Overview:
Structure probing data (DMS and 2A3) for a 177-nucleotide construct. Conditions: 150 mM KOAc, 10 mM MgCl2 and 150 mM bicine (pH 8.5), 24 C. The 2A3 profile rests on 2,906 reads. As a SHAPE reagent, 2A3 marks flexible, mostly unpaired nucleotides at the ribose 2'-OH.
RNA sequence: GGGAACGACUCGAGUAGAGUCGAAAAAAAGAUAUGGAGCAGCUUUCUCGAUUCACGAACUACGAGUGUUUAUUCGGAAACGAAUAAACCCUCGCGUGACAGGAUUGACAGCUGCUCCUAAGUCAAACUUACCAUUGUGGUUCGCCACAAUGGUAAGAAAAGAAACAACAACAACAAC
Reactivity to DMS in 0.01 (KOAc 150mM, MgCl2 10mM, bicine 150mM(pH8.5), 24C), signal-to-noise 2, nucleotides 027 to 126: a130a100a090g010a010u000a080u020g000g000a030g000c000a000g010c010u020u000u010c080u000c070g000a100u000u010c000a020c040g000a110a060c100u020a300c020g010a010g020u010g000u000u010u000a000u000u000c000g020g000a020a020a030c000g000a000a000u000a000a000a000c000c040c000u000c010g020c100g000u000g010a050c300a170g000g000a070u000u000g000a010c130a030g000c000u010g000c010u000c000c010u010a000a060g000u000c020a090a060a210
Reactivity to 2A3 in 0.01 (KOAc 150mM, MgCl2 10mM, bicine 150mM(pH8.5), 24C), signal-to-noise 2, nucleotides 027 to 126: a040a000a000g010a010u040a000u090g000g010a000g020c000a000g010c010u070u100u000c070u090c110g240a300u110u010c020a000c020g010a120a020c120u240a060c300g000a020g010u020g000u000u010u000a000u000u010c010g040g000a020a000a010c000g010a000a000u010a000a010a000c080c020c020u000c000g000c000g000u000g010a020c040a140g300g260a300u150u170g000a010c030a000g000c010u000g010c000u000c000c000u000a010a000g000u010c000a000a010a050